Structure probing data (2A3 and DMS) for a 177-nucleotide construct. The reactions ran in a buffer of 150 mM KOAc, 10 mM MgCl2 and 150 mM bicine (pH 8.5), at 24 C. For 2A3 the reverse transcriptase was SuperScript II with manganese. The 2A3 profile rests on 3,764 reads. The data come from the RNA Mapping Database (RMDB), library TTRDEL.
RNA sequence: GGGAACGACUCGAGUAGAGUCGAAAAGAUAUGGAUUGAGUGUACCUUCAACAGCUCGGAAACGAGACAUGAAGACACCAAUCCUAAGUCAAAGGUGUAAUCCUUGGUUCGCCAAGGAUUACACCAACAUGACUGUCUUCUUCGGAAGACAGUCAUGAAAAGAAACAACAACAACAAC
Reactivity to 2A3 in 0.01 (KOAc 150mM, MgCl2 10mM, bicine 150mM(pH8.5), 24C), signal-to-noise 2, nucleotides 027 to 126: g010a010u110a060u150g030g000a000u000u100g030a210g210u000g000u130a270c050c000u010u020c010a090a090c040a170g050c000u000c000g020g000a090a050a000c010g000a000g010a000c030a100u110g000a000a000g070a000c000a010c020c000a010a020u000c000c000u020a090a000g020u040c090a120a030a140g010g000u010g000u010a010a010u020c000c020u000u000g040g000u050u210c300g030c090c000a010a000g020g010a000u000u000a030c000a000c000c000a000a000
Reactivity to DMS in 0.01 (KOAc 150mM, MgCl2 10mM, bicine 150mM(pH8.5), 24C), signal-to-noise 2, nucleotides 027 to 126: g010a060u000a300u000g020g020a000u000u000g000a120g020u010g010u000a110c270c000u010u040c000a020a100c250a130g000c000u000c000g020g010a050a060a180c010g000a010g000a050c160a110u000g010a010a000g010a080c000a000c000c000a020a010u000c000c010u000a010a040g000u000c020a030a100a120g020g030u000g000u000a000a000u000c010c000u000u000g010g010u000u000c210g030c010c000a010a000g010g010a000u000u000a000c000a000c000c000a030a070